[RMDB]
RNA sequence: GGGAACGACUCGAGUAGAGUCGAAAAGUCUGUGUCCAGCUGUGCUCAGAUACCCUCGUGAGCCUUGAGGGUCAGCUCGCCUGAGCAAUGAAGUGUGUGGAGGCCCAGGUGGGGACUGGGGGGCCUCCCCUCAAGGCCCAGCUCCAGGCAGAGAUGGGCCCAGACAGUCUUUCGAGACUGUCUGGGCAAAAGAAACAACAACAACAAC
Reactivity to 2A3 in 0.01 (KOAc 150mM, MgCl2 10mM, bicine 150mM(pH8.5), 24C), signal-to-noise 2, nucleotides 027 to 156: g040u000c010u000g090u010g050u080c050c020a010g000c030u060g010u060g060c010u000c000a020g000a080u120a160c050c080c030u040c040g130u090g060a040g030c000c000u010u020g000a000g020g000g030u030c010a020g040c030u040c020g070c000c050u040g010a020g010c050a010a100u100g020a130a090g070u040g010u060g040u120g070g000a000g000g000c000c010c010a010g050g010u030g030g010g000g010a050c020u040g010g010g050g030g090g060c000c010u010c000c000c000c030u030c000a000a000g030g010c000c000c000a010g000c000u010c040c010a060g010g010c020a010g000a010g030a080u080g030g080
An RNA of 207 nucleotides, treated with 2A3 and read out base by base. Source: RMDB library OK3TST, as collected in RNAgym.